[RMDB]
RNA sequence: GGGAACGACUCGAGUAGAGUCGAAAAACCUGUGAAGUUCGCUUCACAGGUGACGGGCUCGUAGCUCAGCGGGAGAGCGCCGCCUUUGCGAGGCGGAGGCCGCGGGUUCAAAUCCCGCCGAGUCCACCAAACGCGUUCGUGGUUUCGACCACGAACGAGUAAGUACAUCGUUCGCGAUGUACUUACUAAAAGAAACAACAACAACAAC
Reactivity to 2A3 in 0.01 (KOAc 150mM, MgCl2 10mM, bicine 150mM(pH8.5), 24C), signal-to-noise 3, nucleotides 027 to 156: a010c000c000u000g000u010g000a010a020g010u070u180c210g050c140u000u000c000a000c000a010g000g000u020g010a040c080g010g000g000c010u000c000g000u010a000g000c000u000c010a010g010c140g100g180g020a010g000a000g010c010g010c000c000g000c000c000u120u110u180g120c150g060a020g000g000c000g000g000a010g000g000c010c000g000c000g000g010g000u000u000c000a000a010a000u000c010c000c000g010c000c000g000a000g000u020c000c000a000c010c000a020a070a010c090g000c010g010u000u000c000g000u010g000g040u050u080u120c240g070a030c010c000a000c000g000a000a000c000g010
Reactivity to DMS in 0.01 (KOAc 150mM, MgCl2 10mM, bicine 150mM(pH8.5), 24C), signal-to-noise 2, nucleotides 027 to 156: a020c000c000u000g050u010g010a020a020g010u010u010c300g050c030u000u000c000a020c000a010g000g000u000g020a000c060g020g010g010c000u010c050g010u000a230g020c010u000c000a270g010c110g020g000g020a040g000a070g010c010g000c000c010g010c000c020u000u000u090g030c230g020a070g000g090c000g040g000a000g000g000c140c030g030c030g020g000g020u000u000c040a230a300a070u000c000c000c000g000c000c050g000a080g000u000c000c010a080c020c010a030a100a100c050g000c020g010u000u000c000g020u000g000g000u000u000u000c290g010a090c040c000a020c000g000a000a000c000g030

Conditions: 150 mM KOAc, 10 mM MgCl2 and 150 mM bicine (pH 8.5), 24 C. This 207-nucleotide RNA was probed chemically with 2A3 and DMS. For DMS the reverse transcriptase was MarathonRT. 2A3 adducts were read by reverse transcription with SuperScript II with manganese. Values cover nucleotides 27 to 156. For 2A3, 4,566 sequencing reads were counted.